[RMDB]
RNA sequence: GGGAACGACUCGAGUAGAGUCGAAAAAAGAUAUGGACGAAGUUGAGCUUUACAACACCCUAUAAUCAAGCUCGGAAACGAGCUUGGUAGGGUGUAAGUAAAGCAAUGAUGCUUCGUCCUAAGUCAACACGACAGUCAUGUUCGCAUGACUGUCGUGAAAAGAAACAACAACAACAAC
Reactivity to DMS in 0.01 (KOAc 150mM, MgCl2 10mM, bicine 150mM(pH8.5), 24C), signal-to-noise 1, nucleotides 027 to 126: a090a030g020a020u010a300u000g000g000a000c020g010a000a060g000u000u000g050a040g030c000u000u000u000a000c000a060a020c020a020c000c000c050u040a090u020a300a110u000c000a000a010g040c000u000c000g000g010a150a110a220c010g000a000g000c060u000u000g000g010u010a000g040g000g000u000g000u020a000a050g010u000a000a000a000g020c000a110a060u010g000a230u010g010c000u000u000c000g000u000c000c000u020a030a080g050u000c090a130a130
An RNA of 177 nucleotides, treated with DMS and read out base by base.
For DMS, 717 sequencing reads were counted.
Source: RMDB library TTRDES, as collected in RNAgym.
The RNA was probed in 150 mM KOAc, 10 mM MgCl2 and 150 mM bicine (pH 8.5) at 24 C.
Values cover nucleotides 27 to 126.